Chemical mapping of a 170-nucleotide RNA with DMS and 2A3.

RNA sequence: GGGAACGACUCGAGUAGAGUCGAAAAGAGGAGGAAUUUCGGAAGGAAUUCUCCCAAGAAGGUCCAAGAGAACUUUCAAGAAGGAGGAUUUUUCCCCAAGACGCUGGUGGACUCUUGGAAUGGGAAAUACGCUGAGUCUUCGGACUCAGCAAAAGAAACAACAACAACAAC
Reactivity to DMS in 0.01 (KOAc 150mM, MgCl2 10mM, bicine 150mM(pH8.5), 24C), signal-to-noise 3, nucleotides 027 to 129: g050a050g020g000a060g020g010a020a030u040u030u010c040g000g040a000a000g000g000a000a000u040u000c020u000c070c020c000a090a080g130a000a100g030g020u030c040c030a060a130g030a050g010a010a020c070u000u000u000c090a050a070g040a150a100g060g050a050g000g040a130u020u020u030u050u010c050c010c010c130a000a000g020a080c220g040c080u050g000g030u040g010g010a110c000u010c030u030u030g020g050a000a000u040g010g000g030a000a000a000u070a080c130
Reactivity to 2A3 in 0.01 (KOAc 150mM, MgCl2 10mM, bicine 150mM(pH8.5), 24C), signal-to-noise 3, nucleotides 027 to 129: g040a040g030g020a010g020g090a010a020u020u030u050c040g050g020a040a080g000g020a000a000u110u000c030u010c030c020c000a040a030g060a000a000g040g000u000c020c040a030a000g030a000g000a030a000c010u020u080u060c060a020a040g010a030a070g050g010a010g000g000a010u010u020u010u080u030c000c000c000c010a040a010g040a000c040g010c070u070g000g020u060g040g030a020c010u010c000u000u000g020g050a080a040u060g020g030g030a040a030a000u160a060c070